[RMDB]
RNA sequence: GGGAACGACUCGAGUAGAGUCGAAAAGUCUGAGGCUGGCAGACGUCCAGUUGGAAUGAGCUGUAAGCAGACGGGCAGCGAAAGUGCAAUGUGAAGAGAAGCCAGAUUCACUGCAAGUGAUAGGGCGACUACGAUACAUUUUCGAAUGUAUCGUAGUAAAAGAAACAACAACAACAAC
Reactivity to DMS in 0.01 (KOAc 150mM, MgCl2 10mM, bicine 150mM(pH8.5), 24C), signal-to-noise 9, nucleotides 027 to 126: g010u000c010u000g000a100g010g010c020u000g010g010c020a050g000a060c060g010u010c010c010a130g020u010u020g000g000a080a060u020g010a140g010c030u000g000u010a090a100g010c030a050g010a080c080g000g010g000c010a050g000c040g000a050a080a080g010u010g000c050a070a060u010g010u010g000a070a080g000a100g010a120a110g000c010c020a070g000a140u030u010c010a030c010u010g010c190a100a100g010u010g000a040u010a100g010g000g010c030g000
Reactivity to 2A3 in 0.01 (KOAc 150mM, MgCl2 10mM, bicine 150mM(pH8.5), 24C), signal-to-noise 9, nucleotides 027 to 126: g010u010c020u030g020a030g050g060c010u010g020g000c000a010g020a110c020g040u030c010c000a050g090u110u160g080g080a170a150u090g010a050g060c010u010g020u050a050a030g030c000a000g020a050c030g010g030g000c010a020g000c010g070a100a040a010g060u050g010c010a030a100u060g020u040g040a050a060g020a010g020a130a000g010c000c010a020g020a080u030u030c010a000c020u120g080c130a160a080g020u000g010a020u030a040g060g010g010c010g010
Source information
An RNA of 177 nucleotides, treated with DMS and 2A3 and read out base by base. For DMS the reverse transcriptase was MarathonRT. For DMS, 62,873 sequencing reads were counted. Source: RMDB library OK1LIB, as collected in RNAgym. For 2A3, 20,405 sequencing reads were counted. High 2A3 reactivity points to a flexible backbone, as in loops and unpaired stretches. In probing experiments dimethyl sulfate is read out at A N1 and C N3, which are open when not base-paired.